Record summary
This 177-nucleotide RNA was probed chemically with DMS and 2A3. Reactivities are given for positions 27 through 126. DMS adducts were read by reverse transcription with MarathonRT. High DMS reactivity at an A or C suggests that its Watson-Crick edge is free. The data come from the RNA Mapping Database (RMDB), library OK2TST.
RNA sequence: GGGAACGACUCGAGUAGAGUCGAAAAGUGGUUCUUCGGCUUAUACCACAUUGCGUUUAGAUUCCGGCUUGCGCCAAUCGAUCCAGGCCGCGAGAACCUCGCCGAAUGAACACGACCGAAACAAACAGUGAUAGGUCGGAUUCGUCCGACCUAUCACAAAAGAAACAACAACAACAAC
Reactivity to DMS in 0.01 (KOAc 150mM, MgCl2 10mM, bicine 150mM(pH8.5), 24C), signal-to-noise 1, nucleotides 027 to 126: g000u000g010g010u000u000c010u020u100c040g000g020c000u010u000a140u000a100c060c050a110c080a090u000u000g000c130g000u040u000u000a050g020a080u000u000c060c070g000g020c000u000u020g000c190g000c130c050a060a040u010c090g000a050u040c130c050a060g000g020c020c000g010c240g010a020g000a040a080c010c040u000c230g000c020c020g000a050a040u000g010a000a000c070a100c030g000a190c050c080g000a060a060a080c170a090a060a130c110a070
Reactivity to 2A3 in 0.01 (KOAc 150mM, MgCl2 10mM, bicine 150mM(pH8.5), 24C), signal-to-noise 1, nucleotides 027 to 126: g020u040g030g050u000u000c000u000u000c020g000g030c030u120u240a080u040a150c030c000a160c030a290u090u240g030c070g060u020u050u080a180g020a210u040u070c030c010g020g020c040u000u040g050c050g020c140c110a080a240u200c060g020a080u020c010c040a020g000g000c010c010g000c110g000a010g030a070a050c000c040u040c040g000c000c010g020a030a170u120g030a000a010c000a010c080g020a020c030c070g100a110a020a090c040a010a110a010c050a040
Conditions: 150 mM KOAc, 10 mM MgCl2 and 150 mM bicine (pH 8.5), 24 C.